Notes
The record gives the reactivity of an RNA of 177 nucleotides to 2A3 and DMS. Values are in units of 0.01, from 0 to 300, in steps of 10.

RNA sequence: GGGAACGACUCGAGUAGAGUCGAAAAGAUAUGGAUCAUUUGUCAGCUCAGACAGUCGGAAACGACUGUCGAGCUUGGAUUUAAUGAGUCCUAAGUCAAAACCUGCGAUACUUCGGUAUCGCAGGAACAGAAAUAUUUGGUUCGCCAAAUAUUUCUGAAAAGAAACAACAACAACAAC
Reactivity to 2A3 in 0.01 (KOAc 150mM, MgCl2 10mM, bicine 150mM(pH8.5), 24C), signal-to-noise 3, nucleotides 027 to 126: g040a010u110a040u150g020g000a020u010c000a030u000u000u010g010u000c010a010g000c000u000c020a050g000a020c000a010g010u000c010g000g060a140a070a090c010g000a000c010u000g020u000c010g000a000g020c010u000u090g020g010a010u280u170u250a030a010u010g010a020g190u070c000c000u030a130a030g040u030c020a030a040a160a260c000c000u000g000c010g000a010u000a000c020u040u170c300g100g000u000a000u000c010g000c000a000g010g000a000a000
Reactivity to DMS in 0.01 (KOAc 150mM, MgCl2 10mM, bicine 150mM(pH8.5), 24C), signal-to-noise 5, nucleotides 027 to 126: g000a050u000a300u010g000g010a250u000c000a010u000u000u000g010u000c000a040g010c000u010c000a150g020a010c000a000g000u000c000g000g010a140a120a200c000g010a010c000u010g010u000c000g000a000g000c000u000u010g020g000a010u000u010u000a020a010u000g000a080g010u000c000c010u000a060a190g000u010c030a100a070a130a130c010c010u000g000c000g000a010u000a000c000u000u020c190g010g020u000a000u000c000g010c000a000g000g000a030a060

Conditions: 150 mM KOAc, 10 mM MgCl2 and 150 mM bicine (pH 8.5), 24 C.
Source: RMDB library TTRDEL, as collected in RNAgym.
Reactivities are given for positions 27 through 126.